[RMDB]
Source: RMDB library M2PK90, as collected in RNAgym. This 177-nucleotide RNA was probed chemically with 2A3 and DMS. DMS adducts were read by reverse transcription with MarathonRT. The RNA was probed in 150 mM KOAc, 10 mM MgCl2 and 150 mM bicine (pH 8.5) at 24 C. The DMS profile rests on 2,761 reads. Reactivities are given for positions 27 through 126. High 2A3 reactivity points to a flexible backbone, as in loops and unpaired stretches.
RNA sequence: GGGAACGACUCGAGUAGAGUCGAAAAGUCAAGAUGUGAAGGAUAGGUGGGAGGCUUUGAAGUGUGGACGCCAGUCUGCAUGGAGCCGACCUUGAAAUACCACCCUUUAAUGGAAAAACAAAGUGAAACGUAUGUCUUUGUUCGCAAAGACAUACGUAAAAGAAACAACAACAACAAC
Reactivity to 2A3 in 0.01 (KOAc 150mM, MgCl2 10mM, bicine 150mM(pH8.5), 24C), signal-to-noise 2, nucleotides 027 to 126: g060u040c020a050a060g040a170u170g050u060g060a030a010g020g030a020u170a150g030g000u050g000g020g040a050g000g010c000u260u170u080g050a040a050g020u000g020u020g000g010a020c000g010c040c010a020g020u000c000u000g000c000a030u030g020g000a010g000c010c000g030a050c000c000u000u030g010a000a010a030u060a030c000c000a020c000c000c010u050u040u040a100a080u080g060g050a060a050a030a010a020c080a030a180a030g140u170g120a160a150
Reactivity to DMS in 0.01 (KOAc 150mM, MgCl2 10mM, bicine 150mM(pH8.5), 24C), signal-to-noise 4, nucleotides 027 to 126: g000u000c050a110a060g010a140u010g020u010g000a070a050g000g020a090u000a090g030g010u000g000g000g040a300g010g000c010u000u000u010g010a070a140g010u000g030u000g020g010a010c000g000c150c180a140g000u000c000u000g000c000a000u000g010g000a030g020c010c010g000a100c060c040u000u000g020a040a030a130u010a080c020c020a070c040c000c040u000u000u010a060a050u010g000g010a050a040a070a080a080c140a060a060a090g010u010g000a080a070